[RMDB]
RNA sequence: GGGAACGACUCGAGUAGAGUCGAAAACACACAAGGUUCGCCUUGUGUGCAAGAAUAGACGAAUACUACCGUACAAGUAUUCAGGUCACAUAACUACGGAAAUGGCGUUCUGCUUCGGCAGAACGAACGUGUCUGGUUACUUCGGUAACCAGACACGAAAAGAAACAACAACAACAAC
Reactivity to 2A3 in 0.01 (KOAc 150mM, MgCl2 10mM, bicine 150mM(pH8.5), 24C), signal-to-noise 2, nucleotides 027 to 126: c000a000c000a000c010a000a010g000g030u030u050c150g150c020c000u000u020g000u000g000u000g000c000a050a050g050a070a080u130a110g040a010c030g000a010a010u000a020c000u070a110c000c060g110u060a080c070a070a010g000u010a020u030u000c000a030g110g070u030c010a030c000a220u160a210a080c030u100a030c110g100g070a060a080a070u130g190g000c040g000u000u010c000u000g000c010u060u060c110g120g000c000a040g000a020a000c000g020a000a000
Reactivity to DMS in 0.01 (KOAc 150mM, MgCl2 10mM, bicine 150mM(pH8.5), 24C), signal-to-noise 1, nucleotides 027 to 126: c010a040c080a010c000a010a010g000g000u000u000c300g010c000c000u000u000g000u000g000u000g000c060a080a090g000a140a060u000a130g000a040c070g010a020a010u000a010c000u000a070c060c000g010u000a060c200a140a020g000u000a040u010u000c020a130g010g010u010c030a120c190a060u000a020a070c190u000a040c070g030g000a260a030a080u010g000g000c000g000u000u000c000u000g010c000u000u000c200g020g050c010a010g010a020a000c010g010a000a050

Structure probing data (2A3 and DMS) for a 177-nucleotide construct. For DMS the reverse transcriptase was MarathonRT. For DMS, 882 sequencing reads were counted. The data come from the RNA Mapping Database (RMDB), library M2PK50.